[RMDB]
RNA sequence: GGGAACGACUCGAGUAGAGUCGAAAAAUACCCCUCGGAGGCUUUUGCGAAACAAGAAAAGCCAAUCGUCAGAGGGCCUGCCUACACUGGAGAUUUGGCCGGGUUUGACGCUUACAUGACCUCGCAACGUGCAUUAUCGAUUCGUCGAUAAUGCACGAAAAGAAACAACAACAACAAC
Reactivity to 2A3 in 0.01 (KOAc 150mM, MgCl2 10mM, bicine 150mM(pH8.5), 24C), signal-to-noise 1, nucleotides 027 to 126: a000u040a020c000c000c040c010u030c070g170g090a020g020g010c040u120u110u140u110g050c050g090a100a130a050c020a090a060g150a090a120a000a000g000c000c000a000a000u010c040g070u000c020a030g030a040g050g030g030c020c020u060g050c010c000u040a080c050a080c090u040g040g000a080g030a180u060u280u180g060g000c000c000g100g000g020u070u000u050g000a020c000g020c020u040u090a020c070a070u180g120a240c030c020u090c030g070c000a070a060
Reactivity to DMS in 0.01 (KOAc 150mM, MgCl2 10mM, bicine 150mM(pH8.5), 24C), signal-to-noise 1, nucleotides 027 to 126: a090u000a080c160c010c010c120u000c080g000g020a140g000g000c000u000u000u000u000g020c020g020a130a060a060c190a190a060g000a080a040a070a090g010c010c010a080a030u000c070g000u000c040a030g020a180g010g000g010c050c040u010g010c000c000u000a040c160a250c120u000g000g000a030g000a100u000u010u010g040g040c020c020g040g000g000u010u010u010g040a100c020g000c080u010u000a020c140a050u000g010a160c070c050u000c050g040c110a120a140

Chemical mapping of a 177-nucleotide RNA with 2A3 and DMS. High DMS reactivity at an A or C suggests that its Watson-Crick edge is free. The RNA was probed in 150 mM KOAc, 10 mM MgCl2 and 150 mM bicine (pH 8.5) at 24 C.